[RMDB]
RNA sequence: GGGAACGACUCGAGUAGAGUCGAAAAAGAAACAGAAUGGUCACAGUUUAUAUCUAGCAGACAAUUUGACUGCUGAUGAAACAAAGGCGCUUAAAGAGUUAUAUGGCCCCGUUGAUCCUACUUUCUUAAGGAUAAGACUUCGGUCUUAUCAAAAGAAACAACAACAACAAC
Reactivity to DMS in 0.01 (KOAc 150mM, MgCl2 10mM, bicine 150mM(pH8.5), 24C), signal-to-noise 9, nucleotides 027 to 129: a010g030a110a060a050c100a110g030a060a050u020g000g000u020c030a000c110a130g030u010u010u010a110u070a060u050c010u080a020g050c000a000g000a130c070a160a200u050u060u050g000a070c010u030g020c010u020g010a040u020g030a040a020a020c030a050a070a090g000g020c030g000c070u010u010a040a040a070g030a080g000u020u030a040u040a100u000g040g020c020c010c030c050g040u020u040g000a020u000c050c020u000a060c220u000u000u000c000u010u010a050a140g030
Reactivity to 2A3 in 0.01 (KOAc 150mM, MgCl2 10mM, bicine 150mM(pH8.5), 24C), signal-to-noise 7, nucleotides 027 to 129: a010g110a010a060a000c110a030g070a050a120u120g070g000u020c000a020c040a050g010u010u080u000a300u050a020u070c120u180a000g000c000a020g080a200c070a140a190u140u190u300g090a110c020u000g000c000u000g000a020u030g000a030a000a000c000a020a140a030g020g000c050g010c060u010u050a080a060a010g110a000g000u220u010a090u040a080u250g040g000c000c000c000c020g000u050u070g000a050u010c010c010u030a140c050u030u020u020c000u070u000a040a080g090
Structure probing data (DMS and 2A3) for a 170-nucleotide construct. For DMS the reverse transcriptase was MarathonRT. The reactions ran in a buffer of 150 mM KOAc, 10 mM MgCl2 and 150 mM bicine (pH 8.5), at 24 C. The data come from the RNA Mapping Database (RMDB), library 15KLIB.